This 207-nucleotide RNA was probed chemically with DMS and 2A3.
RNA sequence: GGGAACGACUCGAGUAGAGUCGAAAACAACACGUCCUCGUCGUACAGAGUGAUAACAUGUGUCACCACAUAUCCAAGCUUGGGUACACGGGCUUGACCCAACCCCUUGGGCGGAUGGUGGCACAUGAAAAGAAGUAACACUUCGGUGUUACUUCAACUACUCAGAUCUCUUCGGAGAUCUGAGUAGAAAAGAAACAACAACAACAAC
Reactivity to DMS in 0.01 (KOAc 150mM, MgCl2 10mM, bicine 150mM(pH8.5), 24C), signal-to-noise 2, nucleotides 027 to 156: c060a080a140c070a100c030g020u000c030c010u000c000g010u020c080g020u020a160c040a110g010a100g010u020g010a150u000a050a140c000a020u000g030u000g000u000c020a020c000c000a050c070a190u000a050u000c000c000a000a080g030c080u000u010g010g030g100u010a020c130a020c080g010g020g050c060u000u000g000a110c000c010c020a130a060c060c030c020c000u010u000g020g020g030c080g000g040a080u000g000g010u000g000g000c010a010c020a000u000g000a040a030a070a060g000a000a040g000u000a000a010c000a000c000u010u020c300g010g040u000g000u000u000a010c000u000u000c000a050a130
Reactivity to 2A3 in 0.01 (KOAc 150mM, MgCl2 10mM, bicine 150mM(pH8.5), 24C), signal-to-noise 5, nucleotides 027 to 156: c050a000a030c030a020c070g070u040c000c010u030c020g160u030c040g090u230a090c100a080g040a030g040u180g040a080u080a140a020c000a000u010g000u000g000u000c000a000c030c000a030c040a110u260a030u070c000c000a000a000g030c050u020u010g010g000g000u010a030c020a020c050g000g020g000c020u270u300g180a300c010c000c010a010a050c000c000c000c000u000u000g000g000g000c000g010g000a010u020g000g000u000g000g000c000a000c000a000u000g000a000a000a000a000g010a000a000g000u000a000a000c000a000c000u020u090c260g090g000u000g010u000u000a000c010u000u000c000a000a000
2A3 adducts were read by reverse transcription with SuperScript II with manganese. The reactions ran in a buffer of 150 mM KOAc, 10 mM MgCl2 and 150 mM bicine (pH 8.5), at 24 C.